[RMDB]
RNA sequence: GGGAACGACUCGAGUAGAGUCGAAAAGACGACACGGUAAUACUCAUACGCCAGGAUGGGGUUGAAAGCAACAGCAUAGGGACUGAGGUCAAGGUUAAAAGCCUGCGUGGCCCCGGACACCUCGUCCCGACUGCUUUUCAUGCGGACCUCAGAGACACCUUAUACGACGGUUCGCCGUCGUAUAAGGAAAAGAAACAACAACAACAAC
Reactivity to DMS in 0.01 (KOAc 150mM, MgCl2 10mM, bicine 150mM(pH8.5), 24C), signal-to-noise 1, nucleotides 027 to 156: g000a120c020g030a180c080a050c060g010g040u070a070a150u000a230c050u000c020a110u000a060c150g010c000c070a100g020g000a160u000g030g000g060g050u000u020g010a050a060a140g070c020a030a030c030a010g000c030a190u010a250g000g060g010a100c020u030g040a020g060g030u000c020a080a200g000g020u010u000a100a080a110a080g010c000c030u000g050c190g040u000g020g050c010c050c000c010g000g010a220c120a010c010c030u010c020g010u010c000c000c000g000a000c040u010g010c010u000u000u000u000c080a140u000g040c050g020g020a080c010c010u010c010a030g000a050g020a110c030a040
Reactivity to 2A3 in 0.01 (KOAc 150mM, MgCl2 10mM, bicine 150mM(pH8.5), 24C), signal-to-noise 2, nucleotides 027 to 156: g060a010c080g010a000c010a010c050g030g000u060a160a070u100a200c030u030c070a030u070a130c040g060c060c030a000g120g000a070u050g020g020g010g000u020u070g080a060a010a040g000c000a000a010c000a030g130c010a000u000a010g000g010g000a010c070u160g000a030g000g000u010c000a000a020g030g030u080u090a070a300a100a000g000c010c000u100g060c270g150u230g000g040c020c040c070c010g020g000a000c000a020c020c020u020c030g000u000c010c000c000g000a000c000u000g000c000u040u030u020u020c090a070u100g000c000g010g050a000c000c000u000c000a000g000a000g020a040c000a040